RNA sequence: GGGAACGACUCGAGUAGAGUCGAAAAUAGGUUCGAUUCCUAGUAUCUCAACCGAAAAGGGGAUAUAGUUCAACUGGUAGAGCACUGUAUUUUUCAUACAGCGAAAGGCACAAGACUUCGAACAUUAACUGAAGACAAACUUCGGUUUGUCUUCAGUAAAAGAAACAACAACAACAAC
Reactivity to 2A3 in 0.01 (KOAc 150mM, MgCl2 10mM, bicine 150mM(pH8.5), 24C), signal-to-noise 1, nucleotides 027 to 126: u030a030g060g050u010u040c020g010a000u060u000c000c010u000a010g000u000a090u020c070u000c020a000a150c120c020g090a060a120a060a040g000g010g000g000a020u080a020u000a160g090u110u020c030a040a010c110u080g130g020u130a100g000a020g210c060a020c030u020g020u040a050u090u130u000u060u160c050a020u000a040c000a000g030c070g100a090a000a030g060g060c060a020c020a060a020g000a020c080u070u050c120g010a020a010c020a040u040u130a070
Reactivity to DMS in 0.01 (KOAc 150mM, MgCl2 10mM, bicine 150mM(pH8.5), 24C), signal-to-noise 2, nucleotides 027 to 126: u020a040g010g020u000u000c170g000a300u000u010c000c010u000a070g000u000a030u000c010u010c010a100a240c140c010g000a020a100a170a130g000g010g000g000a070u030a010u000a130g000u000u000c040a070a070c150u000g000g040u000a090g020a130g030c020a070c010u010g010u000a000u010u000u010u010u010c190a050u010a020c040a000g010c060g000a030a040a150g030g030c110a090c060a100a060g000a040c110u000u000c080g010a030a050c070a150u010u000a070